[RMDB]
RNA sequence: GGGAACGACUCGAGUAGAGUCGAAAAUGGUUGCAAUGUCCAGUCAGAGGUGGACUUUAUUUCGACGCGUUUACGAAAUAAAUUAGCAAUCGAAAGCCCAAAAAUUGAUUGUGGCUUAUUGCAAACACAUGUUAUACAACUUCGGUUGUAUAACAUGAAAAGAAACAACAACAACAAC
Reactivity to 2A3 in 0.01 (KOAc 150mM, MgCl2 10mM, bicine 150mM(pH8.5), 24C), signal-to-noise 5, nucleotides 027 to 126: u070g010g010u000u000g000c020a050a050u090g000u000c010c000a010g120u120c070a060g040a060g190g150u050g010g000a000c000u000u020u010a030u000u010u010c030g010a050c030g060c050g210u100u180u090a070c010g030a000a030a010u020a010a010a020u130u160a050g010c000a010a020u010c010g030a040a020a020g000c000c000c000a040a140a000a010a020u080u120g050a040u030u070g040u110g090g010c030u060u100a110u190u220g020c030a060a060a000c020a010
Reactivity to DMS in 0.01 (KOAc 150mM, MgCl2 10mM, bicine 150mM(pH8.5), 24C), signal-to-noise 8, nucleotides 027 to 126: u010g000g020u000u000g010c010a090a080u000g000u000c000c010a040g000u010c100a090g010a150g020g020u000g010g010a020c010u000u000u000a050u010u000u000c010g020a130c160g020c160g000u010u010u010a110c020g010a040a040a120u000a000a010a030u010u010a170g000c010a040a050u010c030g010a060a070a090g010c010c000c010a030a040a060a080a140u000u000g000a070u000u000g010u010g020g010c040u000u010a050u010u000g010c070a040a040a070c130a130